[RMDB]
RNA sequence: GGGAACGACUCGAGUAGAGUCGAAAAGAUAUGGACCAUGGUAGUACCCACGCGUUGAAAUCGGAAACGAUGGAGCGUGUGAGUACAAACAUGGUCCUAAGUCAAAAUCUCCCGUUCGCGGGAGAAAGUACCUUAACUACUUCGGUAGUUAAGGUACAAAAGAAACAACAACAACAAC
Reactivity to DMS in 0.01 (KOAc 150mM, MgCl2 10mM, bicine 150mM(pH8.5), 24C), signal-to-noise 5, nucleotides 027 to 126: g010a060u000a300u000g000g010a010c010c000a010u010g000g000u000a300g010u000a010c000c010c000a010c010g020c000g040u000u000g000a160a140a030u000c010g000g000a130a110a140c020g000a010u000g000g010a150g020c000g020u000g010u000g010a030g020u000a010c000a010a060a250c010a010u000g000g000u000c000c010u000a000a060g010u010c040a090a060a140a110u000c000u000c000c000c010g020u000u000c180g020c010g010g000g000a000g000a010a020a090
Reactivity to 2A3 in 0.01 (KOAc 150mM, MgCl2 10mM, bicine 150mM(pH8.5), 24C), signal-to-noise 2, nucleotides 027 to 126: g020a020u060a020u140g010g000a000c010c000a000u020g000g030u090a060g000u000a000c010c000c000a000c000g020c000g050u120u270g130a040a050a010u010c010g010g040a070a060a030c010g000a010u020g010g040a030g000c000g010u010g010u000g000a010g000u000a000c000a020a210a000c000a000u010g000g000u000c000c000u000a000a000g000u010c000a000a000a000a100u020c000u000c000c000c010g010u050u060c240g000c030g090g010g010a000g000a010a010a010